Notes: The record gives the reactivity of an RNA of 177 nucleotides to DMS and 2A3. For 2A3 the reverse transcriptase was SuperScript II with manganese.
[RMDB]
RNA sequence: GGGAACGACUCGAGUAGAGUCGAAAACAACAAAACAAAACAUAGGGGAGUCAGGGUUCGGACCACCUACCAGAACCUAGGGUAACACUGACUGUGGAGGGGAAAAGAAAGAAAACAAAACAAAACACAUAGUAAUAGGAUUCGUCCUAUUACUAUGAAAAGAAACAACAACAACAAC
Reactivity to DMS in 0.01 (KOAc 150mM, MgCl2 10mM, bicine 150mM(pH8.5), 24C), signal-to-noise 6, nucleotides 027 to 126: c110a110a080c190a120a070a120a110c170a090a060a110a100c140a110u030a130g000g000g000g000a040g010u020c050a090g000g020g020u000u010c050g010g000a090c090c090a050c140c070u000a060c030c010a070g020a070a050c060c040u030a110g010g000g010u000a050a110c120a090c030u010g000a060c070u010g010u040g000g000a110g000g000g000g000a050a030a060a090g000a080a060a070g030a080a040a040a070c210a040a040a040a040c090a020a020a110a090c300a070
Reactivity to 2A3 in 0.01 (KOAc 150mM, MgCl2 10mM, bicine 150mM(pH8.5), 24C), signal-to-noise 9, nucleotides 027 to 126: c050a010a010c040a020a150a010a010c090a030a120a030a000c040a120u200a090g000g000g020g010a040g050u050c040a020g020g000g020u010u020c010g010g060a110c030c040a100c050c040u090a090c010c000a060g020a020a010c000c010u020a010g020g000g010u030a060a000c060a010c130u080g070a020c030u050g050u100g030g040a120g020g010g020g040a010a060a020a040g140a020a090a010g120a030a100a020a010c120a020a060a020a010c060a020a090a030a000c090a010

Notes
The data come from the RNA Mapping Database (RMDB), library OK1LIB. The RNA was probed in 150 mM KOAc, 10 mM MgCl2 and 150 mM bicine (pH 8.5) at 24 C.